[RMDB]
RNA sequence: GGGAACGACUCGAGUAGAGUCGAAAAGAUAUGGAUAUCUGUGGACCUUUGAUCUGAGUCGGAAACGACUCAGGGAGGUCAGCACAGAGUAUCCUAAGUCAAAGACUUGCAGUUCGCUGCAAGUCAACUCUAUUAGAGGCUUCGGCCUCUAAUAGAGAAAAGAAACAACAACAACAAC
Reactivity to 2A3 in 0.01 (KOAc 150mM, MgCl2 10mM, bicine 150mM(pH8.5), 24C), signal-to-noise 2, nucleotides 027 to 126: g050a010u100a020u170g000g010a000u020a020u010c010u020g010u000g000g040a030c010c000u300u300u090g040a040u010c000u000g000a010g010u000c010g010g000a040a110a040c000g010a020c000u000c000a000g000g000g000a000g010g060u100c180a010g070c000a000c000a000g080a010g100u020a000u020c000c000u000a180a030g050u020c070a260a070a010g010a010c000u000u020g000c000a020g020u090u130c220g160c200u000g000c000a010a000g010u010c000a000a000
Reactivity to DMS in 0.01 (KOAc 150mM, MgCl2 10mM, bicine 150mM(pH8.5), 24C), signal-to-noise 2, nucleotides 027 to 126: g010a050u010a300u000g010g000a010u010a050u000c010u010g010u010g000g000a020c010c000u010u010u030g000a040u010c000u000g000a010g030u010c000g010g000a110a100a170c020g010a040c010u000c010a000g000g000g010a010g040g010u000c050a050g040c000a000c000a020g010a070g010u010a010u000c010c000u000a060a210g020u010c040a140a160a220g010a020c000u010u000g000c000a010g000u000u020c300g020c000u000g000c000a010a000g000u000c000a030a080